Chemical mapping of a 177-nucleotide RNA with DMS. The DMS profile rests on 1,583 reads. The data come from the RNA Mapping Database (RMDB), library OK2TST. The RNA was probed in 150 mM KOAc, 10 mM MgCl2 and 150 mM bicine (pH 8.5) at 24 C.
RNA sequence: GGGAACGACUCGAGUAGAGUCGAAAAGUGUCAUUGAAAAUCUUCUCUAGCAAGGGAUUCAACUCGUUGGAUGAAGUUACCCAUCAAGUGAGUGUUUUGUUGGAUCAAUAUCACGGAAUGAACACAAAAAUCAUAAAAUUUUCGAAUUUUAUGAUUUAAAAGAAACAACAACAACAAC
Reactivity to DMS in 0.01 (KOAc 150mM, MgCl2 10mM, bicine 150mM(pH8.5), 24C), signal-to-noise 2, nucleotides 027 to 126: g020u010g000u000c020a010u000u000g010a080a120a150a110u010c040u010u000c050u000c010u020a040g030c030a040a020g030g010g020a120u010u010c160a080a110c010u000c040g020u000u000g010g010a040u000g010a040a090g010u000u000a110c040c000c010a100u010c060a060a060g020u000g000a050g000u000g000u000u000u000u010g010u000u010g010g010a060u000c040a050a070u000a070u000c040a030c100g000g000a070a030u000g000a080a040c020a030c040a020a090